Chemical mapping of a 177-nucleotide RNA with 2A3 and DMS.
2A3 adducts were read by reverse transcription with SuperScript II with manganese.
Reactivities are given for positions 27 through 126.
For DMS, 1,047 sequencing reads were counted.
The RNA was probed in 150 mM KOAc, 10 mM MgCl2 and 150 mM bicine (pH 8.5) at 24 C.
RNA sequence: GGGAACGACUCGAGUAGAGUCGAAAAGACAAAUGCAGCAUAUAAGGCUAAGCAGGAAAGGGACGGUAGCUCCUGGUGUCAGUUCAUACGGUGUGAUGCAUCUGCGUCGUGCACACAUGCACCCAAACGCGUGAAGAUUUUUCGAAAUCUUCACGCGAAAAGAAACAACAACAACAAC
Reactivity to 2A3 in 0.01 (KOAc 150mM, MgCl2 10mM, bicine 150mM(pH8.5), 24C), signal-to-noise 1, nucleotides 027 to 126: g030a030c050a020a040a010u070g000c010a010g000c050a050u090a000u100a300a020g100g090c020u040a040a030g000c020a010g050g000a060a080a060g060g000g020a040c070g070g030u030a030g000c060u010c000c000u010g060g010u020g000u060c000a010g030u010u050c010a030u070a160c040g070g030u060g030u010g020a110u080g000c020a010u000c030u100g110c020g040u130c000g070u040g000c010a010c000a000c000a010u020g090c020a060c000c000c030a000a000a000
Reactivity to DMS in 0.01 (KOAc 150mM, MgCl2 10mM, bicine 150mM(pH8.5), 24C), signal-to-noise 2, nucleotides 027 to 126: g020a110c070a070a060a050u030g010c040a040g010c020a040u000a090u000a090a050g000g000c030u000a100a130g040c060a040g000g000a080a060a060g000g000g000a110c030g030g010u000a060g010c060u010c010c030u000g000g020u010g010u000c030a040g050u000u000c050a100u010a030c090g000g000u000g020u000g000a120u000g000c010a050u000c080u000g010c050g000u000c170g000u000g010c040a050c050a020c030a060u000g000c100a090c020c000c090a080a100a190